[RMDB]
RNA sequence: GGGAACGACUCGAGUAGAGUCGAAAACCUCACUACAUUUUACUGUUCCUAAAGAAUUUGUGACAGGUACAGUAAAACGUAUUGCAAGGUUUAUCAGUUCCUAUAAACGGGUAAAUAACAAUAUAUGAAAAGCAAAGACUGUUCGCAGUCUUUGCAACUACCUAUUGGGGUUCGCCCCAAUAGGUAGAAAAGAAACAACAACAACAAC
Reactivity to DMS in 0.01 (KOAc 150mM, MgCl2 10mM, bicine 150mM(pH8.5), 24C), signal-to-noise 1, nucleotides 027 to 156: c020c000u000c010a130c080u000a020c010a040u000u000u000u010a000c010u000g000u010u010c000c000u000a200a150a170g030a150a190u000u020u000g020u000g010a300c300a060g010g000u010a030c000a030g040u000a000a010a000a000c000g020u010a000u000u000g000c060a250a080g020g080u000u000u000a090u000c070a100g020u000u000c000c000u010a240u000a030a100a070c010g060g010g000u030a080a080a090u000a130a160c030a100a130u000a060u000a070u000g010a060a090a130a180g010c000a070a010a020g000a000c010u000g000u000u020c300g050c000a000g000u010c040u010u000u000g010c000a010a040
Reactivity to 2A3 in 0.01 (KOAc 150mM, MgCl2 10mM, bicine 150mM(pH8.5), 24C), signal-to-noise 4, nucleotides 027 to 156: c010c000u010c010a000c000u000a000c000a020u010u010u000u010a000c010u000g010u070u100c010c000u090a120a170a060g130a250a300u250u270u300g130u120g090a100c180a090g000g010u000a000c000a000g000u010a000a000a000a000c000g010u000a010u000u020g020c090a060a030g030g000u000u020u030a130u080c010a010g010u020u020c010c010u040a090u150a090a090a020c040g060g000g000u060a120a160a050u220a180a010c040a080a070u150a040u070a040u240g080a070a060a030a020g000c000a000a000a000g000a010c000u010g020u060u060c190g000c090a000g000u000c000u000u000u000g000c000a000a000

This 207-nucleotide RNA was probed chemically with DMS and 2A3. For DMS the reverse transcriptase was MarathonRT. Reactivities are given for positions 27 through 156.